[RMDB]
RNA sequence: GGGAACGACUCGAGUAGAGUCGAAAAGAAAUUACGUUUCCUUUACACUUCUCAAACCGGGAUCAAGAGAAGCAAAGCAUCCCUCAUAUCCACGAUGGAGGGUGUCGUGGAGUAUACUGUACCAUAAAGAGCGAACACGGCUUCGGCCGUGUUCGAACAGGCUUAGAAUGUUCGCAUUCUAAGCCUGAAAAGAAACAACAACAACAAC
Reactivity to 2A3 in 0.01 (KOAc 150mM, MgCl2 10mM, bicine 150mM(pH8.5), 24C), signal-to-noise 3, nucleotides 027 to 156: g060a000a060a020u150u100a030c050g020u040u030u010c010c020u040u030u090a060c100a020c020u030u010c020u020c070a250a130a060c090c070g020g000g000a010u030c050a300a000g030a030g020a040a020g050c100a020a040a020g040c020a030u030c010c020c010u040c020a110u080a050u130c010c020a020c010g000a000u030g070g060a030g050g050g010u060g000u000c010g000u020g000g000a040g000u020a030u030a090c110u100g030u080a060c020c010a020u060a150a070a030g080a040g080c010g010a010a000c000a000c000g000g030c020u020u080c180g020g000c010c000g020u000g000u000u040c000g000a000a000
Reactivity to DMS in 0.01 (KOAc 150mM, MgCl2 10mM, bicine 150mM(pH8.5), 24C), signal-to-noise 1, nucleotides 027 to 156: g000a080a040a040u010u000a090c080g030u000u000u000c010c010u000u000u000a210c130a120c020u000u010c010u000c000a090a160a220c180c040g000g020g010a170u000c060a120a300g000a040g010a020a040g010c050a090a080a080g000c070a150u000c000c000c010u000c030a080u000a040u020c000c050a010c040g040a120u000g030g020a040g000g000g020u000g050u000c000g020u000g000g010a090g020u000a090u000a090c150u000g000u000a070c040c030a090u020a090a130a050g010a120g000c010g020a030a030c000a010c000g040g020c020u010u000c300g020g000c020c010g060u000g010u000u000c010g000a010a080